[RMDB]
RNA sequence: GGGAACGACUCGAGUAGAGUCGAAAAGUUCUGUCCGGUGAGGAGUGAUCCAGCUUGGGCUGACGAGAGGCUCCGGAGCCUUCACGUUCAGUGCUUUUUACCUGCCAAUCAAACUGCUACAAGACAAUGACUUAAAACACUUCGGUGUUUUAAGUCAAAAAGAAACAACAACAACAAC
Reactivity to DMS in 0.01 (KOAc 150mM, MgCl2 10mM, bicine 150mM(pH8.5), 24C), signal-to-noise 3, nucleotides 027 to 126: g010u010u000c000u000g000u000c010c000g030g010u010g000a090g000g000a050g020u030g010a090u020c040c060a300g020c070u040u000g030g010g000c000u000g010a120c090g030a250g000a070g000g000c020u000c020c130g010g030a060g000c040c020u000u050c070a090c100g000u000u000c010a020g010u000g010c030u020u010u000u010u000a120c010c010u000g000c090c100a030a100u000c050a060a030a070c110u000g000c030u010a030c070a030a100g000a060c150a180a110
Reactivity to 2A3 in 0.01 (KOAc 150mM, MgCl2 10mM, bicine 150mM(pH8.5), 24C), signal-to-noise 2, nucleotides 027 to 126: g000u020u020c010u000g050u010c040c010g080g040u060g050a030g040g060a140g020u060g030a070u020c000c020a010g030c050u080u080g070g060g000c010u040g020a040c110g030a020g010a020g100g000c030u020c040c080g050g010a010g000c010c000u040u050c070a060c050g010u030u040c020a020g020u020g040c000u020u040u000u030u050a060c000c000u010g040c040c050a030a100u080c040a030a120a050c020u070g050c030u070a040c020a110a000g050a030c060a070a140
Chemical mapping of a 177-nucleotide RNA with DMS and 2A3. Reactivities are given for positions 27 through 126. It was measured as part of the RMDB libraries RFM100 and RFMREP. The RNA was probed in 150 mM KOAc, 10 mM MgCl2 and 150 mM bicine (pH 8.5) at 24 C. For DMS the reverse transcriptase was MarathonRT.